[RMDB]
RNA sequence: GGGAACGACUCGAGUAGAGUCGAAAAGAAAGGCGCGCCUGACAUCUAAAUGGAGUUGCCGCGAGGCCCCGCCUGUUGGCAUCUUCCGUCGAGAUCCUGGGAGACGAUCGCGGUCAGUCCACAGAAAGGGUAAACAAAUCUUCGGAUUUGUUUACCCAAAAGAAACAACAACAACAAC
Reactivity to 2A3 in 0.01 (KOAc 150mM, MgCl2 10mM, bicine 150mM(pH8.5), 24C), signal-to-noise 2, nucleotides 027 to 126: g010a010a030a000g040g040c000g000c000g050c030c000u030g030a030c010a100u080c040u220a020a170a210u220g010g010a050g060u050u040g070c000c000g010c010g010a020g030g030c020c060c000c000g000c010c000u150g030u220u150g020g000c050a020u010c000u150u050c040c020g100u060c010g010a030g000a060u000c010c030u080g010g030g010a000g000a030c080g020a040u020c000g000c010g040g010u020c020a030g060u050c020c010a070c000a060g060a080a090a020
Reactivity to DMS in 0.01 (KOAc 150mM, MgCl2 10mM, bicine 150mM(pH8.5), 24C), signal-to-noise 2, nucleotides 027 to 126: g010a140a120a080g000g000c030g000c030g000c000c000u010g010a050c170a050u020c110u000a070a110a090u030g010g000a070g000u020u000g000c080c020g040c070g000a060g020g020c060c070c040c080g000c050c020u000g010u020u010g000g030c070a040u010c010u020u000c030c070g010u030c160g000a070g000a020u020c050c050u000g000g010g010a120g030a090c090g010a110u000c070g030c050g000g000u000c100a060g020u000c030c020a010c090a050g000a070a130a090